[RMDB]
RNA sequence: GGGAACGACUCGAGUAGAGUCGAAAAGUUGACCGAUACCGACGGCUGGUCACCGCCAGUGGGAUUUCCUGUUUUUUAAUAACAGGCGGCUGUACUGAGUACAUCACCAAACCCCAACACCUCAACAACGAGACUUAUUAUUCGUAAUAAGUCUCGUAAAAGAAACAACAACAACAAC
Reactivity to DMS in 0.01 (KOAc 150mM, MgCl2 10mM, bicine 150mM(pH8.5), 24C), signal-to-noise 6, nucleotides 027 to 126: g000u030u000g000a080c030c020g000a120u020a050c090c040g010a080c040g010g010c030u010g010g010u010c040a230c070c060g010c040c050a050g020u010g000g000g000a100u010u010u000c010c010u010g000u000u000u010u040u050u060a080a100u010a020a030c020a000g000g010c200g000g000c030u010g010u020a050c030u010g000a090g010u000a070c030a080u000c060a120c050c030a040a060a160c050c000c010c020a040a110c140a100c080c060u010c070a050a100c230a100
Reactivity to 2A3 in 0.01 (KOAc 150mM, MgCl2 10mM, bicine 150mM(pH8.5), 24C), signal-to-noise 9, nucleotides 027 to 126: g070u070u080g060a070c020c020g040a080u090a110c040c020g040a040c020g060g000c010u020g000g030u040c040a020c040c020g010c000c010a040g020u130g010g080g070a100u060u080u060c000c010u010g010u000u010u000u010u040u140a210a180u130a020a020c010a010g000g010c000g010g000c010u030g040u070a040c020u030g000a010g050u020a050c010a060u070c020a030c040c030a070a050a140c010c000c000c000a030a020c030a050c030c050u090c040a060a070c000a020
This 177-nucleotide RNA was probed chemically with DMS and 2A3. The data come from the RNA Mapping Database (RMDB), libraries RFM100 and RFMREP. Reactivities are given for positions 27 through 126. Conditions: 150 mM KOAc, 10 mM MgCl2 and 150 mM bicine (pH 8.5), 24 C.